Structure probing data (2A3 and DMS) for a 170-nucleotide construct.
For 2A3 the reverse transcriptase was SuperScript II with manganese.
For DMS the reverse transcriptase was MarathonRT.
High 2A3 reactivity points to a flexible backbone, as in loops and unpaired stretches.
Reactivities are given for positions 27 through 129.
The reactions ran in a buffer of 150 mM KOAc, 10 mM MgCl2 and 150 mM bicine (pH 8.5), at 24 C.

[RMDB]
RNA sequence: GGGAACGACUCGAGUAGAGUCGAAAACUCGGUAAUGGCGAAUGGGACCCAGAACUCUCUUUAGCUUCCGAAAGAGAAGCAAGAGAAAACUGGCUCUCCCUUAGCCAUCCGAGUGGACGUCUGUCCUAAACGCGGUUCUUCGGAACCGCGAAAAGAAACAACAACAACAAC
Reactivity to 2A3 in 0.01 (KOAc 150mM, MgCl2 10mM, bicine 150mM(pH8.5), 24C), signal-to-noise 3, nucleotides 027 to 129: c000u000c000g010g010u100a100a050u020g000g000c000g030a030a010u000g000g000g000a000c000c000c020a000g020a030a020c000u000c000u000c000u080u050u090a030g000c000u000u020c010c010g280a220a120a020g250a000g000a000a000g000c020a000a000g020a000g000a000a000a000a010c030u000g000g000c000u000c000u000c010c020c000u000u010a010g000c000c000a000u000c000c000g000a010g000u050g000g000a020c040g100u060c120u210g040u020c020c000u040a040a080a010
Reactivity to DMS in 0.01 (KOAc 150mM, MgCl2 10mM, bicine 150mM(pH8.5), 24C), signal-to-noise 1, nucleotides 027 to 129: c000u000c030g070g000u050a080a000u000g010g020c040g050a190a040u040g100g010g000a030c000c000c000a000g010a040a300c140u090c000u050c000u010u000u050a150g000c030u050u000c020c020g000a110a060a290g000a010g000a250a020g050c020a030a040g070a030g000a000a060a040a130c000u000g020g020c010u000c020u020c070c020c020u000u030a090g050c000c000a000u000c040c000g010a030g010u000g030g090a000c000g000u090c030u050g000u010c000c030u070a000a110a110